[RMDB]
The record gives the reactivity of an RNA of 207 nucleotides to 2A3. For 2A3, 1,599 sequencing reads were counted. 2A3 adducts were read by reverse transcription with SuperScript II with manganese.
RNA sequence: GGGAACGACUCGAGUAGAGUCGAAAAGAACCUUCGGGUUCGCGCUGUCCUAAGUCCCAAGGGAGCGUCCGAAGGACAUCGAUCUAAUCGGAAACGAUUAGGGAGUCCUAAGGACGCAUCGAUCUUGGGAUAUGGAAACCUGGCAGUUCGCUGCCAACCAGAGUACCCUUUUCGAAGGGUACUCUGGAAAAGAAACAACAACAACAAC
Reactivity to 2A3 in 0.01 (KOAc 150mM, MgCl2 10mM, bicine 150mM(pH8.5), 24C), signal-to-noise 1, nucleotides 027 to 156: g000a000a000c010c020u080u130c300g070g010g000u000u010c010g000c030g010c080u180g060u080c010c000u000a020a060g020u000c000c000c000a000a000g010g000g000a030g010c000g000u000c000c000g050a080a030g000g000a010c000a180u290c060g090a020u040c000u000a000a000u000c000g040g000a080a010a030c010g000a010u000u000a010g040g040g000a020g000u000c010c010u030a030a020g010g010a000c000g020c010a030u090c000g050a050u000c000u000u010g020g000g000a020u020a010u050g020g020a060a080a050c010c050u020g110g000c000a000g000u020u070c150g060c110u010g050c010c000a010a030